RNA sequence: GGGAACGACUCGAGUAGAGUCGAAAAGUGACCCAUCAAUGUGGGUGCAAUUAGGUCUGUUUUGCACAUGUGUGCCUUUGUGUUGUGUAUGCAGUGGAGGAGUGCAUACAAAACUCUGUGCAGACAGGGACAGUUGGCUUCAUGAUGGAGGAAUGUAGCCACGGUAAUAGUUCGCUAUUACCGUGGCAAAAGAAACAACAACAACAAC
Reactivity to 2A3 in 0.01 (KOAc 150mM, MgCl2 10mM, bicine 150mM(pH8.5), 24C), signal-to-noise 6, nucleotides 027 to 156: g090u080g070a020c000c020c000a000u040c050a060a270u150g040u140g030g050g000u090g150c020a020a030u060u050a170g060g040u020c010u000g100u020u050u210u060g020c000a020c030a080u110g070u010g020u040g090c030c040u150u240u190g130u070g020u080u110g060u010g000u040a010u030g020c020a040g050u080g080g020a030g040g010a040g020u010g000c000a000u000a010c000a010a070a010a010c020u040c040u030g000u010g000c020a010g010a010c010a000g020g000g030a050c010a020g010u030u000g040g010c020u030u040c030a050u070g010a030u000g020g030a030g050g080a150a050u140g030u130a020
The record gives the reactivity of an RNA of 207 nucleotides to 2A3. For 2A3 the reverse transcriptase was SuperScript II with manganese. It was measured as part of the RMDB library OK3TST. The RNA was probed in 150 mM KOAc, 10 mM MgCl2 and 150 mM bicine (pH 8.5) at 24 C. Values are in units of 0.01, from 0 to 300, in steps of 10.